[RMDB]
RNA sequence: GGGAACGACUCGAGUAGAGUCGAAAAUUGUUCGCGAAUUGAAUUCGCUCAGUACAUAUGGGCAGAUGGCAGAUAGAAGCAUACACUGGCUUGAAUUCGCGAGUAUGCAUCUUAUUACGAAUAUCCGCAGGACGUAAUGCUUCGGCAUUACGUCCUGAAAAGAAACAACAACAACAAC
Reactivity to DMS in 0.01 (KOAc 150mM, MgCl2 10mM, bicine 150mM(pH8.5), 24C), signal-to-noise 2, nucleotides 027 to 126: u000u020g020u000u000c020g000c030g000a020a000u030u010g000a130a080u010u020c160g000c050u000c000a050g030u000a050c270a060u040a080u020g030g000g000c030a050g010a090u050g000g000c140a080g000a110u040a000g000a050a030g060c010a010u000a000c010a090c020u000g000g000c020u020u000g030a170a020u020u000c000g020c000g050a040g020u000a000u000g000c030a080u010c000u000u000a070u020u030a100c140g000a020a040u040a050u010c060c120g000
Reactivity to 2A3 in 0.01 (KOAc 150mM, MgCl2 10mM, bicine 150mM(pH8.5), 24C), signal-to-noise 2, nucleotides 027 to 126: u040u050g000u000u000c080g000c020g030a000a000u000u090g080a090a120u140u120c040g000c000u000c030a000g000u020a070c060a090u240a040u060g080g030g000c010a060g050a100u090g110g000c000a000g030a040u090a170g060a030a010g060c070a040u050a040c040a120c050u060g080g000c000u060u120g060a000a020u010u000c020g000c000g000a010g010u000a050u000g020c000a030u040c030u150u130a240u050u040a070c030g240a230a050u100a180u080c060c000g020